[RMDB]
RNA sequence: GGGAACGACUCGAGUAGAGUCGAAAAACCGGCGGUAAAUCAACUCAGUUGAAAGCCGCGAGCGCUUUGGGUGCGAACUCAAAGGACAGCAGAUCCGGUGUAAUUCCGGGGCGGACGGUUAGAGUCCAAAAGAGGUUAUCGUUCGCGAUAACCUCAACUUACCAGUAGUGUUCGCACUACUGGUAAGAAAAGAAACAACAACAACAAC
Reactivity to DMS in 0.01 (KOAc 150mM, MgCl2 10mM, bicine 150mM(pH8.5), 24C), signal-to-noise 1, nucleotides 027 to 156: a060c000c000g060g050c000g030g020u000a000a130a230u010c010a040a070c020u030c130a160g000u010u000g010a030a120a300g000c000c000g000c000g050a150g030c080g000c000u000u000u000g000g000g000u000g070c140g000a170a050c000u010c000a010a060a010g030g000a090c030a090g000c020a090g060a120u000c010c000g000g020u000g000u000a140a300u010u000c010c000g000g000g000g000c030g010g000a030c000g000g000u020u050a130g000a210g010u000c040c000a040a020a110a080g000a040g020g010u000u000a020u000c040g000u000u000c300g010c060g050a050u000a010a010c000c000u010c000a000a000
Reactivity to 2A3 in 0.01 (KOAc 150mM, MgCl2 10mM, bicine 150mM(pH8.5), 24C), signal-to-noise 2, nucleotides 027 to 156: a010c000c010g030g010c030g030g000u060a160a190a300u020c010a000a010c060u090c300a180g010u000u000g020a040a040a000g010c010c000g000c000g020a040g010c030g030c000u010u010u020g010g000g010u060g030c080g010a090a010c000u010c020a010a020a000g050g070a080c050a060g000c010a010g040a130u060c000c000g020g000u010g010u030a040a040u110u000c010c000g020g000g000g030c080g000g030a010c010g030g020u130u160a080g060a030g080u000c020c000a000a000a070a090g000a000g000g000u000u000a000u020c020g010u060u050c250g010c000g080a000u000a000a000c000c000u000c000a000a000
This 207-nucleotide RNA was probed chemically with DMS and 2A3. For 2A3 the reverse transcriptase was SuperScript II with manganese. The reactions ran in a buffer of 150 mM KOAc, 10 mM MgCl2 and 150 mM bicine (pH 8.5), at 24 C. DMS adducts were read by reverse transcription with MarathonRT.